Chemical mapping of a 177-nucleotide RNA with 2A3 and DMS. The DMS profile rests on 1,254 reads. Source: RMDB library OK2TST, as collected in RNAgym. The RNA was probed in 150 mM KOAc, 10 mM MgCl2 and 150 mM bicine (pH 8.5) at 24 C.
RNA sequence: GGGAACGACUCGAGUAGAGUCGAAAAUAUCGUGGAGAAGUGUAUAUCUUCCACAAGCUUCUCCCUCUUCAAUAGCUUGGCCACGUACCUUACCCCUUCUUGAUUUGGCUCUUCUCCAUUUAGGAUGCACCGUUAGACGUUUCGACGUCUAACGGUGAAAAGAAACAACAACAACAAC
Reactivity to 2A3 in 0.01 (KOAc 150mM, MgCl2 10mM, bicine 150mM(pH8.5), 24C), signal-to-noise 1, nucleotides 027 to 126: u090a030u060c070g020u050g000g010a030g010a020a050g000u060g150u050a050u060a010u220c060u160u010c010c030a000c000a060a000g030c000u130u000c000u020c000c110c020u110c030u150u150c040a060a190u050a120g000c010u010u010g010g050c000c010a020c060g010u070a070c000c000u050u110a070c000c010c050c090u090u040c040u060u090g130a210u020u050u070g110g000c030u000c030u030u000c010u000c070c030a030u070u070u040a060g020g070a060u000g070
Reactivity to DMS in 0.01 (KOAc 150mM, MgCl2 10mM, bicine 150mM(pH8.5), 24C), signal-to-noise 2, nucleotides 027 to 126: u010a080u010c160g010u000g000g000a070g020a020a040g030u010g000u010a090u020a090u020c150u000u010c070c050a090c080a100a260g000c040u000u000c010u000c000c010c020u010c050u000u000c090a060a070u000a060g010c050u010u000g020g020c040c000a070c100g030u000a080c070c030u010u000a170c060c020c030c010u000u010c050u000u000g010a070u000u000u020g010g000c070u000c020u000u000c050u010c010c050a110u000u000u010a070g010g000a080u000g020